[RMDB]
RNA sequence: GGGAACGACUCGAGUAGAGUCGAAAAGAUAUGGAAAUGGGAGCUUUGAUCUUAGGUGUCGGAAACGACACUAAGGGAGCUCCGUUUCCUAAGUCAAAACCGAUGGUCUUCUUCGGAAGACCAUCGGCACCUUACCGAGGUUCGCCUCGGUAAGGUGAAAAGAAACAACAACAACAAC
Reactivity to DMS in 0.01 (KOAc 150mM, MgCl2 10mM, bicine 150mM(pH8.5), 24C), signal-to-noise 2, nucleotides 027 to 126: g010a040u010a300u000g000g000a000a030a000u000g030g050g010a020g020c000u000u010u020g010a090u000c000u000u010a030g020g020u000g010u000c000g000g000a060a080a210c000g010a030c000a030c000u000a010a000g010g020g000a030g010c000u000c000c020g000u010u000u000c000c000u000a020a130g010u000c010a120a090a140a230c000c000g000a010u000g010g010u000c000u000u000c010u000u010c200g060g000a010a000g010a010c010c000a010u000c000g010g000
Reactivity to 2A3 in 0.01 (KOAc 150mM, MgCl2 10mM, bicine 150mM(pH8.5), 24C), signal-to-noise 2, nucleotides 027 to 126: g000a000u050a010u070g010g160a020a010a000u190g300g050g080a070g040c050u300u300u300g270a170u120c010u000u000a120g300g100u070g010u100c020g000g020a070a020a000c000g010a000c000a000c010u000a000a000g000g000g050a020g000c000u000c000c000g000u020u000u000c000c000u010a040a000g030u030c020a030a030a080a190c010c000g000a000u000g000g000u020c000u000u040c000u040u150c300g090g000a000a020g000a000c000c000a010u000c010g000g030

The record gives the reactivity of an RNA of 177 nucleotides to DMS and 2A3. Values cover nucleotides 27 to 126. For 2A3, 3,464 sequencing reads were counted. Reactivities are rounded to 0.1 and cut off at 0 and 3. The RNA was probed in 150 mM KOAc, 10 mM MgCl2 and 150 mM bicine (pH 8.5) at 24 C. Source: RMDB library TTRDES, as collected in RNAgym.